[RMDB]
RNA sequence: GGGAACGACUCGAGUAGAGUCGAAAAGGUCAAUAUGGCAGUGAUGUUCGUAAGCCAUACAAACGCUCUUCGACCACCAAGAUUUGCCACCAGUCGAAGUCGCUCAUGGUUGUUAUACUCCUGCGGAUGUGUACGGCUGAUUCGUCAGCCGUACACAAAAAGAAACAACAACAACAAC
Reactivity to DMS in 0.01 (KOAc 150mM, MgCl2 10mM, bicine 150mM(pH8.5), 24C), signal-to-noise 1, nucleotides 027 to 126: g020g010u020c090a120a180u020a000u060g010g010c020a000g010u000g010a140u000g020u000u000c090g020u060a080a080g000c000c000a080u000a110c180a120a090a050c160g010c020u000c010u020u000c000g000a050c020c150a110c090c060a000a000g000a050u000u000u030g040c010c070a010c110c090a090g000u000c000g010a010a060g000u000c080g020c040u000c070a050u000g000g050u050u000g050u000u000a070u000a010c090u010c040c010u000g020c000g000g000a150
Reactivity to 2A3 in 0.01 (KOAc 150mM, MgCl2 10mM, bicine 150mM(pH8.5), 24C), signal-to-noise 1, nucleotides 027 to 126: g090g030u000c040a000a070u000a110u240g100g000c000a000g160u090g180a060u280g080u250u010c130g060u000a100a000g000c000c000a000u060a060c050a000a040a040c090g080c120u070c070u070u000c000g060a090c000c030a000c040c000a140a000g150a220u000u150u000g030c050c000a020c000c000a030g100u020c030g000a140a000g070u130c070g000c030u100c090a010u070g020g000u060u060g080u060u000a000u000a000c000u070c000c080u020g030c000g070g000a000